[RMDB]
RNA sequence: GGGAACGACUCGAGUAGAGUCGAAAAGAUGAGCUGGAAGAAAUGUUGAAAUUUUUCGGGUGGAAAAUUGACCUCAUCACCCGCAAGAUCGAUGCCAAUAAUGCCGGUGAGGUCGACCUUAUCGACACAUUAUCAGUAUCUUCGGAUACUGAUAAUGAAAAGAAACAACAACAACAAC
Reactivity to 2A3 in 0.01 (KOAc 150mM, MgCl2 10mM, bicine 150mM(pH8.5), 24C), signal-to-noise 5, nucleotides 027 to 126: g030a050u110g030a010g010c030u020g040g030a050a050g050a050a170a060u110g030u080u050g040a090a120a110u070u020u010u020u040c020g050g000g000u060g050g050a050a060a050a100u110u120g040a050c000c010u030c020a030u030c010a010c010c010c010g000c020a020a020g010a020u060c040g030a020u070g030c010c010a040a060u140a120a020u120g050c020c010g000g030u030g000a030g070g020u000c010g020a040c000c020u110u100a140u110c030g050a000c010a000
Reactivity to DMS in 0.01 (KOAc 150mM, MgCl2 10mM, bicine 150mM(pH8.5), 24C), signal-to-noise 8, nucleotides 027 to 126: g000a080u000g010a150g010c040u000g010g020a100a070g010a090a110a070u010g000u000u000g010a110a080a070u000u000u000u000u000c020g010g020g030u000g010g000a050a030a080a080u000u010g000a070c060c040u000c070a080u000c010a060c020c020c030g000c110a040a030g010a030u000c070g010a120u000g000c040c100a050a080u000a080a130u010g010c020c050g010g000u000g010a080g010g010u000c060g000a070c090c040u010u010a080u000c040g010a110c210a130
This 177-nucleotide RNA was probed chemically with 2A3 and DMS. It was measured as part of the RMDB library OK2TST. The 2A3 profile rests on 9,243 reads. The DMS profile rests on 10,963 reads. The RNA was probed in 150 mM KOAc, 10 mM MgCl2 and 150 mM bicine (pH 8.5) at 24 C.